[RMDB]
RNA sequence: GGGAACGACUCGAGUAGAGUCGAAAAGGGGGCCCUGGUCCUCCCGCAACACUAGUUCGUGAACCUGGUCAGAUCCGGAAGGAAGCAGCCACAGCGGAUGAUGUGUGUGCCGGGAUGUGGCUGGGGUCUCCAAAACAAAUUGGCUUCGGCCAAUUUGCAAAUUAUAGAGGUUCGCCUCUAUAAUUUGAAAAGAAACAACAACAACAAC
Reactivity to DMS in 0.01 (KOAc 150mM, MgCl2 10mM, bicine 150mM(pH8.5), 24C), signal-to-noise 1, nucleotides 027 to 156: g000g000g080g040g020c020c010c050u010g040g030u000c000c050u010c000c060c010g070c010a080a030c000a040c000u000a300g010u000u000c030g010u030g030a120a300c060c040u000g000g000u010c050a300g000a260u020c010c000g000g040a220a220g020g000a070a060g000c070a210g050c000c010a050c030a300g000c010g030g000a040u000g010a260u010g000u030g000u000g010u000g070c030c030g000g000g050a060u000g010u010g000g000c000u000g010g000g020g010u010c000u000c010c010a000a010a090a160c010a000a010a020u000u000g020g030c000u000u020c280g060g040c000c000a000a010u010u000u010g000
Reactivity to 2A3 in 0.01 (KOAc 150mM, MgCl2 10mM, bicine 150mM(pH8.5), 24C), signal-to-noise 2, nucleotides 027 to 156: g000g000g000g000g000c010c000c000u000g000g000u000c000c000u000c000c000c000g010c000a010a000c000a000c000u010a000g010u010u000c000g010u030g170a200a160c050c060u030g010g060u180c010a000g000a010u000c000c000g090g090a080a070g050g000a000a000g020c010a000g000c010c000a040c020a030g000c010g000g000a020u020g000a170u160g020u000g010u010g160u050g010c110c020g000g000g010a010u020g080u180g000g000c000u000g020g010g000g010u000c000u010c000c000a000a000a000a000c000a000a010a010u000u000g000g000c010u010u100c210g100g040c000c010a000a000u010u000u000g000
Description
Structure probing data (DMS and 2A3) for a 207-nucleotide construct. For 2A3 the reverse transcriptase was SuperScript II with manganese. The reactions ran in a buffer of 150 mM KOAc, 10 mM MgCl2 and 150 mM bicine (pH 8.5), at 24 C. It was measured as part of the RMDB library ARCHII. For DMS the reverse transcriptase was MarathonRT. Values cover nucleotides 27 to 156.